[RMDB]
RNA sequence: GGGAACGACUCGAGUAGAGUCGAAAAAGUUGCUUCGGCUUCUUCUAGUUCGCGACCUGCGUGGAACGGCUCCUUCUUCACACCAGCCGGAGAUCGAAACUACCCGGUGGAUACAACUCUUGAGCGCCGAGCUUAACCUGCAGAAGUUCACAUAAAAUCAAUAGUUCAACUUCGGUUGAACUAUUGAAAAAGAAACAACAACAACAAC
Reactivity to 2A3 in 0.01 (KOAc 150mM, MgCl2 10mM, bicine 150mM(pH8.5), 24C), signal-to-noise 1, nucleotides 027 to 156: a000g050u030u050g020c090u020u010c050g040g000c040u080u020c000u080u000c010u120a020g010u010u060c010g010c060g060a070c010c000u070g030c040g040u070g040g040a100a020c100g050g000c010u070c030c000u100u100c030u180u220c070a060c030a040c120c020a060g110c010c010g030g010a050g040a100u130c060g080a130a130a090c020u060a040c070c020c010g000g000u020g000g000a040u080a170c000a050a070c070u050c040u110u090g060a040g020c020g000c130c000g010a000g010c000u020u020a040a110c000c000u010g020c020a010g000a110a000g070u120u110c110a040c040a120u240a060a070a030a070
The record gives the reactivity of an RNA of 207 nucleotides to 2A3. Reactivities are given for positions 27 through 156. Conditions: 150 mM KOAc, 10 mM MgCl2 and 150 mM bicine (pH 8.5), 24 C.